[RMDB]
RNA sequence: GGGAACGACUCGAGUAGAGUCGAAAAUUGUGAUGUUUAGUGUCCAAUAAUAGGCAAAAAAUUAGUAAUUCUUUUAUGUGCCUAUGUGUAUAUAUGUGUACAUAUGUGUCUAUAUAUGCAUAUAUUUAUGGUUAUGUACAUACUAACGAUUAUCAAACAUCCGUCACGUAUUCGUACGUGACGGAUGAAAAGAAACAACAACAACAAC
Reactivity to 2A3 in 0.01 (KOAc 150mM, MgCl2 10mM, bicine 150mM(pH8.5), 24C), signal-to-noise 3, nucleotides 027 to 156: u050u050g040u040g070a190u050g030u030u040u120a100g030u010g050u030c010c030a020a040u180a080a030u050a080g000g000c070a000a000a000a020a060a090u160u120a070g050u090a140a180u180u270c010u100u080u060u060a110u150g080u050g020c000c000u000a010u020g020u000g010u000a000u010a000u000a000u000g170u030g000u170a010c000a030u190a060u170g100u050g020u050c030u030a030u000a000u020a000u120g000c000a010u040a020u000a050u050u080u010a050u110g020g010u040u000a020u120g030u020a010c030a030u070a060c080u060a040a040c030g060a060u100u140a080u230c020a050a040a020
Reactivity to DMS in 0.01 (KOAc 150mM, MgCl2 10mM, bicine 150mM(pH8.5), 24C), signal-to-noise 1, nucleotides 027 to 156: u000u000g000u000g000a080u010g020u000u000u000a140g040u010g010u000c030c010a150a180u000a090a060u000a050g000g040c010a010a040a090a070a070a170u040u000a120g080u010a060a110u000u000c040u000u040u000u010a070u010g020u000g000c010c040u010a040u000g030u020g040u020a010u010a020u000a010u000g030u010g010u010a000c010a050u000a050u000g010u000g020u010c090u000a040u020a010u010a020u010g000c010a010u000a020u000a010u010u010u000a050u010g040g000u000u020a040u020g040u010a040c040a040u000a040c090u000a010a050c040g010a080u010u000a080u020c100a100a090a200